[RMDB]
RNA sequence: GGGAACGACUCGAGUAGAGUCGAAAAGAUAUGGACGCUGGGCCUCCAACAGCUCGGAAACGAGACAUGGAGGCCCACAUGCGUCCUAAGUCAAAGUUGGUAAUUAGCUUCGGCUAAUUACCAACAAGUAUUCUAAAGACUUCGGUCUUUAGAAUACAAAAGAAACAACAACAACAAC
Reactivity to DMS in 0.01 (KOAc 150mM, MgCl2 10mM, bicine 150mM(pH8.5), 24C), signal-to-noise 5, nucleotides 027 to 126: g010a060u000a300u010g000g000a010c000g030c000u000g020g010g020c000c010u000c000c000a010a060c270a180g000c000u000c000g020g000a100a060a200c000g000a020g000a030c080a230u000g010g010a020g010g010c010c000c000a010c070a040u000g000c010g000u000c000c000u000a000a080g010u000c040a070a070a120g000u000u000g000g000u000a000a000u000u000a000g000c010u000u010c240g020g000c000u000a000a000u000u000a000c000c010a000a000c000a030a070
Reactivity to 2A3 in 0.01 (KOAc 150mM, MgCl2 10mM, bicine 150mM(pH8.5), 24C), signal-to-noise 2, nucleotides 027 to 126: g030a020u090a030u130g010g000a000c020g020c020u050g030g010g010c000c000u000c000c010a070a070c060a110g020c010u000c000g000g000a130a070a020c000g030a010g010a020c090a020u070g000g000a000g020g010c030c000c000a010c000a000u000g000c000g000u010c000c010u000a030a000g000u020c030a050a050a090g000u000u010g000g010u010a000a000u000u010a010g000c000u020u080c210g010g020c010u000a000a000u000u010a000c000c000a000a010c000a000a000

Structure probing data (DMS and 2A3) for a 177-nucleotide construct. The RNA was probed in 150 mM KOAc, 10 mM MgCl2 and 150 mM bicine (pH 8.5) at 24 C. It was measured as part of the RMDB library TTRDEL. The DMS profile rests on 6,777 reads. DMS (dimethyl sulfate) methylates the pairing face of unpaired adenines and cytosines. For 2A3, 6,936 sequencing reads were counted.